[RMDB]
The record gives the reactivity of an RNA of 177 nucleotides to DMS. DMS (dimethyl sulfate) methylates the pairing face of unpaired adenines and cytosines. The RNA was probed in 150 mM KOAc, 10 mM MgCl2 and 150 mM bicine (pH 8.5) at 24 C. For DMS the reverse transcriptase was MarathonRT. Reactivities are given for positions 27 through 126.

RNA sequence: GGGAACGACUCGAGUAGAGUCGAAAAACAGAAUGAAUGCAGAAAAGGCUGAAUUCUGUAAUAAAAGCAAACAGCCUGGCAUAGCAGUGAGCCAGCAGAGCAGAUGGGCUGCAAGUAAAGGAACAUGUGCCAUCAUUGUUUUCGAACAAUGAUGGCAAAAAGAAACAACAACAACAAC
Reactivity to DMS in 0.01 (KOAc 150mM, MgCl2 10mM, bicine 150mM(pH8.5), 24C), signal-to-noise 2, nucleotides 027 to 126: a100c010a000g000a000a000u010g010a250a090u020g020c000a050g000a050a130a080a180g000g030c010u000g000a270a060u000u000c000u000g000u000a050a140u010a040a050a060a140g000c090a070a090a110c070a050g010c070c000u000g010g020c100a100u000a060g000c080a060g000u010g010a140g020c030c040a020g000c060a010g010a090g010c040a010g000a120u000g010g010g000c040u010g020c020a070a060g000u010a000a120a120g000g000a030a080c110a110u000g000